[RMDB]
RNA sequence: GGGAACGACUCGAGUAGAGUCGAAAACGCAUUCCUAAAUCCUUCGCCUGGGCCAAUCUGCUAGACAGCUGAGCGGAAUUCUCAUGCUUGUCCCAGGACAAGUUGAGAAUGCGGAAGUGAUAAUCCAACUGAGGAUCACGUUCGCGUGGUCCUCAGUAAAAGAAACAACAACAACAAC
Reactivity to DMS in 0.01 (KOAc 150mM, MgCl2 10mM, bicine 150mM(pH8.5), 24C), signal-to-noise 5, nucleotides 027 to 126: c040g000c050a110u010u000c010c040u000a040a090a130u030c090c020u010u010c110g000c010c000u010g000g000g010c040c020a060a090u030c040u010g000c060u000a060g000a100c150a080g000c050u010g000a040g000c170g000g000a120a100u040u000c040u000c010a020u030g020c080u000u000g010u000c000c000c080a150g010g010a040c020a010a030g000u010u010g030a090g000a000a010u000g010c000g000g000a080a070g010u010g020a090u020a080a100u030c030c030a120
Reactivity to 2A3 in 0.01 (KOAc 150mM, MgCl2 10mM, bicine 150mM(pH8.5), 24C), signal-to-noise 4, nucleotides 027 to 126: c030g010c000a030u010u010c000c020u030a060a030a090u040c000c000u030u030c080g000c020c010u060g020g000g000c020c010a030a070u060c020u070g010c010u040a030g030a150c070a030g020c030u060g050a000g030c000g080g040a090a070u200u020c020u000c020a030u300g050c010u030u020g010u000c010c010c000a010g020g010a010c000a000a000g000u010u050g070a070g000a040a000u020g000c010g000g030a050a030g040u050g050a100u050a080a060u050c000c000a000
An RNA of 177 nucleotides, treated with DMS and 2A3 and read out base by base.
The RNA was probed in 150 mM KOAc, 10 mM MgCl2 and 150 mM bicine (pH 8.5) at 24 C.
Reactivities are given for positions 27 through 126.
For DMS the reverse transcriptase was MarathonRT.